[RMDB]
RNA sequence: GGGAACGACUCGAGUAGAGUCGAAAAGUAGCGCGUGGGUGGUGAGUCGACGAAACGCCAUUCUAGCGCCGCGGUGUGAUGCGUAGGUGACGAUACGUAGAGGCUGCGGAGCUCAGCACCUGCAUAGGCCGCUUGGGUGGUUCGCCAUCUAAGCGGCAAAAGAAACAACAACAACAAC
Reactivity to DMS in 0.01 (KOAc 150mM, MgCl2 10mM, bicine 150mM(pH8.5), 24C), signal-to-noise 7, nucleotides 027 to 126: g020u000a050g010c060g010c100g030u000g010g000g020u000g000g010u010g010a060g010u010c060g000a140c140g010a060a060a170c050g010c030c080a000u030u030c100u010a140g020c030g010c000c010g010c000g010g020u000g000u040g000a090u010g000c010g020u000a020g010g010u010g000a090c160g000a090u000a010c020g000u000a030g010a160g010g010c010u000g000c020g000g000a200g000c010u010c050a040g000c040a020c000c000u000g000c030a080u020a070g010
Reactivity to 2A3 in 0.01 (KOAc 150mM, MgCl2 10mM, bicine 150mM(pH8.5), 24C), signal-to-noise 6, nucleotides 027 to 126: g040u030a010g020c020g000c010g020u020g000g010g000u000g000g090u000g020a050g020u060c020g050a110c030g020a100a020a000c010g000c000c010a000u060u010c050u040a010g000c000g000c000c000g000c000g000g000u040g030u090g050a040u020g010c010g000u010a020g000g100u040g080a030c030g010a040u010a040c010g010u010a010g010a030g110g000c000u010g000c010g020g000a020g000c000u010c020a020g030c000a020c000c000u020g000c000a030u040a040g070